[RMDB]
RNA sequence: GGGAACGACUCGAGUAGAGUCGAAAAGGGGUCACCGCAAUGAGGUUACAGGGAGCUCAACUGAAGCCUCCACGGUUGAGCAUCGAUCUGUAACUCCCCACCAUUGCCGGUGACGGAGGCACCCAAAGACUUUUUUUGCUUCGGCAAAAAAAGUCAAGAACUUUGUUAAGUUCGCUUAACAAAGUUCAAAAGAAACAACAACAACAAC
Reactivity to 2A3 in 0.01 (KOAc 150mM, MgCl2 10mM, bicine 150mM(pH8.5), 24C), signal-to-noise 2, nucleotides 027 to 156: g120g010g030g000u000c000a000c000c000g010c000a010a010u000g000a000g000g020u000u000a000c000a000g020g060g030a050g010c000u000c000a010a000c010u020g040a140a010g020c000c000u000c000c000a000c010g010g010u000u000g000a010g020c010a110u150c030g050a070u040c000u000g000u010a020a000c000u020c050c000c010c000a010c020c000a010u000u030g110c220c130g020g000u000g000a000c020g000g000a000g000g000c000a010c000c000c010a050a120a020g000a000c010u000u020u000u000u020u000u000g000c000u010u090c270g110g010c010a010a000a010a000a000a000a000g000u000c000a000a020
Reactivity to DMS in 0.01 (KOAc 150mM, MgCl2 10mM, bicine 150mM(pH8.5), 24C), signal-to-noise 1, nucleotides 027 to 156: g000g010g000g030u000c000a010c000c000g040c000a150a030u000g030a230g000g020u000u000a070c020a080g010g000g000a220g030c000u000c020a020a080c000u000g010a030a120g000c000c010u000c020c060a300c000g020g010u000u000g010a020g020c000a170u020c100g020a190u000c000u000g070u000a020a040c010u000c300c070c020c070a300c040c000a010u000u000g000c070c060g040g000u020g010a030c000g010g050a030g110g030c010a050c030c020c010a100a100a200g000a020c000u030u030u000u000u000u030u000g020c010u000u000c300g000g000c020a020a000a000a020a000a040a070g000u030c000a000a080